Description:
The record gives the reactivity of an RNA of 177 nucleotides to DMS and 2A3. High DMS reactivity at an A or C suggests that its Watson-Crick edge is free. The reactions ran in a buffer of 150 mM KOAc, 10 mM MgCl2 and 150 mM bicine (pH 8.5), at 24 C. For DMS the reverse transcriptase was MarathonRT. Reactivities are given for positions 27 through 126. It was measured as part of the RMDB libraries RFM100 and RFMREP.
RNA sequence: GGGAACGACUCGAGUAGAGUCGAAAAGGGCUCCGAAAGGAGAUCCGGUAGGGGGGCGUGCCGAUGGCGCAGAAGCCUGAGGCGUAAGCUCGGGUGGAGCCGUCGGUAACGAAUAUCCUGGCGGUAGCAGUUUAACAGUUUUCGAACUGUUAAACUGAAAAGAAACAACAACAACAAC
Reactivity to DMS in 0.01 (KOAc 150mM, MgCl2 10mM, bicine 150mM(pH8.5), 24C), signal-to-noise 9, nucleotides 027 to 126: g010g010g010c010u000c000c000g010a100a090a170g000g000a010g000a040u020c010c000g000g010u010a050g000g010g010g010g010g010c020g010u000g010c000c000g010a010u010g000g000c000g010c130a140g010a120a210g000c010c000u000g000a060g010g020c050g000u030a070a130g000c000u000c000g000g000g010u000g000g000a160g000c000c000g010u000c000g000g010u000a010a010c010g000a080a080u030a090u010c010c010u000g000g000c050g000g010u020a110g020
Reactivity to 2A3 in 0.01 (KOAc 150mM, MgCl2 10mM, bicine 150mM(pH8.5), 24C), signal-to-noise 7, nucleotides 027 to 126: g070g020g010c010u000c010c000g040a060a020a020g020g000a020g010a020u040c000c010g020g100u070a040g010g010g000g000g010g040c010g010u010g000c000c000g010a010u010g010g000c010g020c110a020g040a050a010g000c000c000u020g010a050g080g000c010g000u050a030a020g010c000u000c000g000g000g000u040g010g010a020g010c000c000g000u000c000g000g000u010a080a020c010g000a020a020u070a070u110c010c010u040g050g020c030g010g040u040a040g070